[RMDB]
RNA sequence: GGGAACGACUCGAGUAGAGUCGAAAAGAGCGCGUUGGUGAUCGUGGGCACGUCGAACAGGUGCAGAACGCGCCGCUCGGCGUCGUGGUAGCCGGUCGUGAGCACGAGCCCCGAAGCGACGCCGAGCGACACGAAGCACUCGGCCAGGUAAGGGUCGCGUCUAUCUGGUGUUCGCACCAGAUAGACGAAAAGAAACAACAACAACAAC
Reactivity to 2A3 in 0.01 (KOAc 150mM, MgCl2 10mM, bicine 150mM(pH8.5), 24C), signal-to-noise 2, nucleotides 027 to 156: g040a020g000c010g000c000g020u000u020g000g110u120g100a030u010c000g000u040g000g000g050c000a000c040g160u160c060g090a270a050c070a160g050g030u000g020c000a010g050a020a000c000g000c000g000c000c000g000c000u010c000g010g010c010g010u000c000g000u020g000g050u080a080g090c070c010g050g000u080c000g020u040g180a020g190c170a010c090g030a070g100c020c020c010c010g100a070a000g020c020g000a000c000g000c000c000g030a000g000c000g000a000c000a000c000g000a060a020g060c020a000c030u110c000g010g000c010c000a070g110g080u130a090a140g070g020g030u040c020g010
Record summary:
Chemical mapping of a 207-nucleotide RNA with 2A3. For 2A3 the reverse transcriptase was SuperScript II with manganese. The RNA was probed in 150 mM KOAc, 10 mM MgCl2 and 150 mM bicine (pH 8.5) at 24 C.